[RMDB]
RNA sequence: GGGAACGACUCGAGUAGAGUCGAAAAGGCUCCCACUUCGGUGGGAGCCAAAGCUGAACGCGCAGCAAGCGUUAAACAUGGAAAAACGCACGUCCUAUGCGCAAAGCUUCCCCUUCGGGGGAAGCAAUCUGUCCAUAUAGUUCGCUAUAUGGACAGAAAAAGAAACAACAACAACAAC
Reactivity to 2A3 in 0.01 (KOAc 150mM, MgCl2 10mM, bicine 150mM(pH8.5), 24C), signal-to-noise 3, nucleotides 027 to 126: g000g000c000u010c020c020c000a000c020u030u070c210g090g000u010g020g000g010a000g020c010c000a000a000a000g000c000u010g010a070a010c020g000c010g010c000a020g010c020a080a020g000c010g010u030u070a140a290a020c070a250u260g090g080a090a090a030a000a010c010g000c020a020c060g040u010c010c000u070a100u180g010c030g000c020a020a080a000g010c000u000u000c010c010c000c000u020u120c200g020g000g010g000g010a000a000g000c010a000a050
Reactivity to DMS in 0.01 (KOAc 150mM, MgCl2 10mM, bicine 150mM(pH8.5), 24C), signal-to-noise 3, nucleotides 027 to 126: g020g000c000u000c000c020c010a000c000u000u000c160g040g030u010g010g010g030a010g020c020c000a000a010a120g010c020u000g000a050a140c020g000c000g000c040a030g000c050a190a120g000c000g000u000u000a030a070a090c120a240u010g010g000a040a100a030a060a030c010g000c000a070c090g000u000c020c000u000a060u010g010c020g020c100a040a090a140g000c000u000u000c000c000c000c000u000u000c140g030g020g010g000g000a000a000g010c000a010a010

Chemical mapping of a 177-nucleotide RNA with 2A3 and DMS. The DMS profile rests on 2,992 reads. Reactivities are given for positions 27 through 126. It was measured as part of the RMDB library M2PK50.